The record gives the reactivity of an RNA of 207 nucleotides to 2A3 and DMS. It was measured as part of the RMDB library OK3TST. The reactions ran in a buffer of 150 mM KOAc, 10 mM MgCl2 and 150 mM bicine (pH 8.5), at 24 C.

RNA sequence: GGGAACGACUCGAGUAGAGUCGAAAAGUGGGAUGGAUAGACGACAUGUUUUUAACAAAAAAAUUGUAUCCAUUAUGUAUUUUAACAGAAAUGGGAAUUAUAAACGUAUGCUCAGUCCAGUGAAGUCUGAAUAGAGUUAGGCAAACGGGUAGAUUGAAUCACGGAUUAAUUUCGAUUAAUCCGUGAUAAAAGAAACAACAACAACAAC
Reactivity to 2A3 in 0.01 (KOAc 150mM, MgCl2 10mM, bicine 150mM(pH8.5), 24C), signal-to-noise 2, nucleotides 027 to 156: g060u040g000g020g000a020u050g040g000a020u030a090g070a060c030g050a040c030a020u040g020u040u030u000u010u130a200a040c210a060a110a050a020a020a030a080u130u150g010u040a120u010c000c000a000u020u000a060u030g010u000a130u060u240u090u050a010a040c000a000g050a070a060a020u030g000g000g040a030a110u190u010a020u200a160a120a000c040g010u040a000u080g000c000u000c020a000g050u000c030c010a000g030u000g100a050a010g010u090c030u020g000a010a000u030a090g070a000g050u070u020a010g030g010c040a070a030a020c070g000g020g010u020a040g020a100u010u090g020a090
Reactivity to DMS in 0.01 (KOAc 150mM, MgCl2 10mM, bicine 150mM(pH8.5), 24C), signal-to-noise 2, nucleotides 027 to 156: g010u030g010g010g010a100u000g030g000a140u010a110g020a120c020g000a080c080a090u010g000u000u000u000u010u010a090a210c110a000a000a050a080a090a050a150u000u000g010u000a130u000c030c000a010u010u000a160u010g000u000a080u000u010u000u000a080a120c020a060g010a080a040a040u000g010g010g010a110a100u010u000a100u000a020a120a100c020g000u000a050u010g000c000u000c020a200g020u010c020c000a090g020u000g000a080a090g040u000c050u000g030a080a110u000a140g040a090g030u000u010a040g000g020c020a060a030a030c060g000g010g010u000a060g010a190u000u000g000a160